[RMDB]
RNA sequence: GGGAACGACUCGAGUAGAGUCGAAAACAACCUGGCGAUACGUUGGUUUGAGCGGGGCGACUCCCGUCGGGCCACCUACGCCCCGCCUGUUGCUAUGGCCGGACAAGGAGCAUCGCGAUGAGCGUGGGGACAGAGAGAGAUUCGUCUCUCUCUGUCCAAAAGAAACAACAACAACAAC
Reactivity to DMS in 0.01 (KOAc 150mM, MgCl2 10mM, bicine 150mM(pH8.5), 24C), signal-to-noise 3, nucleotides 027 to 126: c110a090a150c030c010u010g020g030c010g000a060u000a030c120g020u000u000g020g000u000u010u000g010a130g020c000g000g000g000g000c020g000a180c170u000c020c020c050g030u010c100g020g010g020c030c040a030c060c030u010a130c040g010c010c000c030c000g010c000c010u010g010u010u000g020c040u000a060u000g000g010c030c030g010g000a070c120a070a100g020g010a090g020c090a050u000c040g000c030g020a120u010g010a210g020c040g010u000g020g020
Reactivity to 2A3 in 0.01 (KOAc 150mM, MgCl2 10mM, bicine 150mM(pH8.5), 24C), signal-to-noise 2, nucleotides 027 to 126: c000a010a090c000c000u050g070g000c040g050a070u010a120c090g050u130u170g090g110u120u150u090g010a070g060c050g000g000g010g040c060g070a070c020u050c020c010c020g030u070c110g020g050g000c010c030a030c020c040u000a020c020g000c000c000c000c010g030c000c020u110g050u090u070g060c040u060a040u040g040g000c030c000g050g030a040c050a120a110g070g000a020g040c040a040u120c040g040c020g040a110u160g020a020g010c020g000u050g000g130